[RMDB]
RNA sequence: GGGAACGACUCGAGUAGAGUCGAAAAUGGGCUACCAGUAAGCGAAAAAUGUUACAGGACGAAAAAAACAUAAUUCGAGAUUUUUCAGGAUGGAUUUUUUUAGGUAUCUAUCAAAACUAUUCUGAUGCAACGUAGAGCACGUUCGCGUGCUCUACAAGUAUGCGUACCAGUUCGCUGGUACGCAUACAAAAGAAACAACAACAACAAC
Reactivity to 2A3 in 0.01 (KOAc 150mM, MgCl2 10mM, bicine 150mM(pH8.5), 24C), signal-to-noise 1, nucleotides 027 to 156: u110g000g040g010c000u060a070c020c000a040g080u120a120a070g010c000g000a090a030a000a000a000u070g010u050u070a030c100a040g110g020a030c100g030a060a000a000a020a000a110a030c100a030u090a100a060u080u040c030g030a040g040a180u050u090u050u060u090c000a020g020g000a010u010g050g000a070u000u000u000u000u000u000u110a020g020g040u120a050u280c010u010a020u020c020a000a000a000a020c010u010a000u010u010c000u020g000a040u080g050c090a110a040c030g010u000a000g000a000g000c000a000c000g010u030u040c110g010c010g040u010g000c000u000c000u000a000c010a010a000

This 207-nucleotide RNA was probed chemically with 2A3. 2A3 adducts were read by reverse transcription with SuperScript II with manganese. Reactivities are rounded to 0.1 and cut off at 0 and 3. The data come from the RNA Mapping Database (RMDB), library M2RFOK. Reactivities are given for positions 27 through 156.